The record gives the reactivity of an RNA of 177 nucleotides to DMS and 2A3. The DMS profile rests on 1,909 reads. The RNA was probed in 150 mM KOAc, 10 mM MgCl2 and 150 mM bicine (pH 8.5) at 24 C. For 2A3, 4,643 sequencing reads were counted. DMS adducts were read by reverse transcription with MarathonRT.
RNA sequence: GGGAACGACUCGAGUAGAGUCGAAAAGAUAUGGAAGUGCCAGUUCCGAUAAGCUAUAUUCGGAAACGAAUAUUAGCUUUUGACGGAACGCACUUCCUAAGUCAAAAGCACUUCUUCGGAAGUGCAAGGCGUAAAGUUAGUUCGCUAACUUUACGCCAAAAGAAACAACAACAACAAC
Reactivity to DMS in 0.01 (KOAc 150mM, MgCl2 10mM, bicine 150mM(pH8.5), 24C), signal-to-noise 2, nucleotides 027 to 126: g000a010u000a190u010g000g010a030a000g050u000g010c120c300a240g000u010u000c000c000g000a060u000a000a010g020c010u000a020u000a000u000u000c000g000g010a030a010a040c000g010a000a000u000a010u020u000a010g000c000u000u000u000u000g020a170c150g000g010a020a010c010g010c000a000c000u000u000c000c000u000a000a070g010u000c020a100a080a130a170g000c000a000c000u000u000c020u000u020c210g030g000a000a010g010u000g000c000a030a040
Reactivity to 2A3 in 0.01 (KOAc 150mM, MgCl2 10mM, bicine 150mM(pH8.5), 24C), signal-to-noise 2, nucleotides 027 to 126: g000a010u030a000u050g000g010a000a010g020u010g050c140c170a110g090u050u010c020c080g070a200u140a270a000g000c000u000a000u000a000u020u020c000g020g000a040a030a000c010g000a000a000u050a070u130u280a050g000c000u000u000u040u070g210a090c050g000g000a000a000c000g000c000a000c000u010u000c000c010u000a000a000g000u000c000a120a020a040a090g000c010a000c020u000u000c010u010u120c300g150g010a000a000g000u000g000c000a010a040